[RMDB]
RNA sequence: GGGAACGACUCGAGUAGAGUCGAAAAGAGGAUUCAACGAGCUUCGUAGCAACGAUAGCAACGUAGCUUUUGCUACGACCCGAGCUAUCGAGGGCAGCUACGUCCCGUGCUCGAGGGGAGAAUCCGAACCUCAUUUUAUGUUCGCAUAAAAUGAGGUAAAAGAAACAACAACAACAAC
Reactivity to 2A3 in 0.01 (KOAc 150mM, MgCl2 10mM, bicine 150mM(pH8.5), 24C), signal-to-noise 8, nucleotides 027 to 126: g120a030g010g010a010u010u010c050a120a060c060g020a010g030c020u060u050c030g040u060a000g000c010a050a050c010g010a020u020a020g000c010a030a070c020g010u010a000g000c010u110u190u230u300g000c000u010a000c000g050a040c020c030c030g040a040g000c000u000a000u030c010g030a150g020g100g010c060a060g010c040u060a030c020g030u060c020c040c020g040u060g000c010u010c000g020a060g030g040g010g000a110g010a010a010u000c000c000g000a010
Reactivity to DMS in 0.01 (KOAc 150mM, MgCl2 10mM, bicine 150mM(pH8.5), 24C), signal-to-noise 9, nucleotides 027 to 126: g020a210g010g000a020u000u000c010a140a170c070g010a090g010c030u000u000c010g020u000a020g010c010a180a200c060g000a020u000a000g010c010a110a170c020g010u010a000g010c010u000u010u010u000g010c000u000a010c000g000a120c130c100c120g010a130g010c000u000a000u000c010g000a090g020g000g020c180a110g010c050u000a030c050g000u010c040c040c070g010u010g000c000u000c010g000a080g000g020g000g000a150g000a030a010u000c000c000g010a100